An RNA of 177 nucleotides, treated with 2A3 and read out base by base. Reactivities are given for positions 27 through 126. The RNA was probed in 150 mM KOAc, 10 mM MgCl2 and 150 mM bicine (pH 8.5) at 24 C.

RNA sequence: GGGAACGACUCGAGUAGAGUCGAAAAACAUAUGUACGCAUAUGAAUAAUGAUAGUCGCCUAAUGGCGAUUUUUUUAUAGCCGAAAUCUAGUCAAAUCAAACCUUUCAAAGGUACCCCCAAAUUGAACCGUUUAGUGAUUUUCGAAUCACUAAACGGAAAAGAAACAACAACAACAAC
Reactivity to 2A3 in 0.01 (KOAc 150mM, MgCl2 10mM, bicine 150mM(pH8.5), 24C), signal-to-noise 4, nucleotides 027 to 126: a000c000a000u010a000u010g030u060a000c160g000c080a000u000a000u010g030a050a040u190a090a040u120g090a050u060a050g020u010c000g030c010c010u210a300a080u270g000g000c000g000a000u000u000u000u010u000u000u070a150u030a010g000c020c010g060a070a000a030u080c090u080a020g070u090c060a070a030a140u080c050a070a060a120c010c010u090u160u150c120a120a120a010g010g020u040a060c010c060c000c000c010a000a060a060u090u110g040a070a070